[RMDB]
RNA sequence: GGGAACGACUCGAGUAGAGUCGAAAAGUGUGCGGCUUAAUUUGACUCAACGCGGGACAACUUACCAGGGCCAGUUGUAUGACGAAUCUUUGAUGAGUACGACUAAGUGGUGCAUGGCCGUUCACAAGACACAGUGGGAAUUCGUUCCCACUGUGUCAAAAGAAACAACAACAACAAC
Reactivity to DMS in 0.01 (KOAc 150mM, MgCl2 10mM, bicine 150mM(pH8.5), 24C), signal-to-noise 3, nucleotides 027 to 126: g060u000g000u010g010c020g010g010c000u010u030a050a080u030u000u020g020a060c060u000c010a090a090c110g000c050g010g000g000a110c110a050a050c150u010u000a040c000c040a040g000g000g000c040c080a150g000u000u030g020u020a020u040g000a060c180g000a080a110u000c050u000u000u020g010a080u010g000a260g010u000a040c030g000a110c030u010a070a150g010u010g020g020u010g000c080a030u000g000g010c020c000g020u000u000c020a000c080a080a110
Reactivity to 2A3 in 0.01 (KOAc 150mM, MgCl2 10mM, bicine 150mM(pH8.5), 24C), signal-to-noise 1, nucleotides 027 to 126: g030u030g000u020g020c010g040g000c030u060u100a060a010u100u130u090g060a060c000u010c040a090a060c080g040c080g090g000g020a030c010a030a030c040u050u120a040c010c010a050g000g030g020c010c010a030g000u000u020g050u070a080u130g050a050c050g060a100a030u020c040u080u150u140g070a100u040g040a030g010u010a040c030g030a010c070u040a050a100g030u040g080g010u010g000c010a020u080g030g000c000c000g000u010u000c010a010c020a030a020